[RMDB]
Chemical mapping of a 177-nucleotide RNA with 2A3 and DMS. It was measured as part of the RMDB library M2PK50. For 2A3 the reverse transcriptase was SuperScript II with manganese. The reactions ran in a buffer of 150 mM KOAc, 10 mM MgCl2 and 150 mM bicine (pH 8.5), at 24 C.
RNA sequence: GGGAACGACUCGAGUAGAGUCGAAAAGGGUGAUCGUUCGCGAUCACCCAAAGAAGCACGAAACGCCAAGAAAUCCCGGAACAUUGGUAUGGAAGCCAGAGAAAACUGACAAGUUCGCUUGUCAGAACAAAUGUAUAUAGUUCGCUAUAUACAUUUGAAAAGAAACAACAACAACAAC
Reactivity to 2A3 in 0.01 (KOAc 150mM, MgCl2 10mM, bicine 150mM(pH8.5), 24C), signal-to-noise 5, nucleotides 027 to 126: g010g000g000u000g010a000u000c010g000u070u050c150g000c000g070a000u010c000a010c000c000c000a000a000a000g000a010a000g020c030a000c030g100a100a210a040c080g010c030c010a040a020g070a080a160a030u040c010c030c000g020g040a070a030c060a100u060u120g000g010u090a100u120g070g070a110a060g010c010c020a020g020a010g010a080a100a030a080c010u000g000a000c000a000a010g000u030u080c160g050c070u000u010g000u010c000a000g000a000a000
Reactivity to DMS in 0.01 (KOAc 150mM, MgCl2 10mM, bicine 150mM(pH8.5), 24C), signal-to-noise 9, nucleotides 027 to 126: g010g010g020u000g010a010u000c000g030u000u010c190g040c010g010a010u000c000a010c000c000c000a010a020a050g000a140a130g010c040a050c070g010a070a090a100c120g010c020c040a040a100g010a080a110a120u000c010c010c010g010g000a050a070c080a110u000u000g000g010u000a110u000g010g000a130a130g010c030c030a050g000a150g000a070a060a090a140c010u000g000a010c000a010a010g010u000u010c210g000c000u000u000g000u000c000a010g000a060a120